[RMDB]
The record gives the reactivity of an RNA of 170 nucleotides to 2A3 and DMS. The DMS profile rests on 19,964 reads. High DMS reactivity at an A or C suggests that its Watson-Crick edge is free. For DMS the reverse transcriptase was MarathonRT. The RNA was probed in 150 mM KOAc, 10 mM MgCl2 and 150 mM bicine (pH 8.5) at 24 C.
RNA sequence: GGGAACGACUCGAGUAGAGUCGAAAACAAAUUUUUGACGUAGCCCCCAUUGAACUCGAAAAUAAAUUCACACCUUUGAGUGUGGAGUCUACACCAGUUGAACCUCCAACUGUAGAUGUGGUAGCACUAAGUACUCGGUUCGCCGAGUACAAAAGAAACAACAACAACAAC
Reactivity to 2A3 in 0.01 (KOAc 150mM, MgCl2 10mM, bicine 150mM(pH8.5), 24C), signal-to-noise 5, nucleotides 027 to 129: c020a000a100a070u090u030u000u040u150g090a050c030g060u040a010g070c000c000c000c000c000a080u000u100g070a060a010c050u010c060g100a020a040a050a050u220a040a080a030u100u040c010a000c010a000c000c030u240u190u300g130a170g060u010g000u000g000g000a010g010u000c010u010a000c020a020c030c000a010g010u010u010g030a090a120c040c000u150c030c010a000a000c000u010g030u080a080g020a160u070g020u040g050g010u020a020g020c020a010c050u030a210a020
Reactivity to DMS in 0.01 (KOAc 150mM, MgCl2 10mM, bicine 150mM(pH8.5), 24C), signal-to-noise 5, nucleotides 027 to 129: c020a050a040a040u020u050u020u010u050g000a200c060g000u010a010g000c040c030c010c010c040a150u120u090g010a020a050c110u040c100g030a080a090a050a100u000a030a050a080u050u030c000a030c000a000c000c040u000u000u050g020a170g050u020g020u020g000g010a030g030u020c030u000a020c000a070c000c000a030g010u000u000g000a110a100c110c080u060c010c030a030a020c020u040g000u020a060g010a110u030g030u000g000g010u050a050g070c030a050c080u000a040a110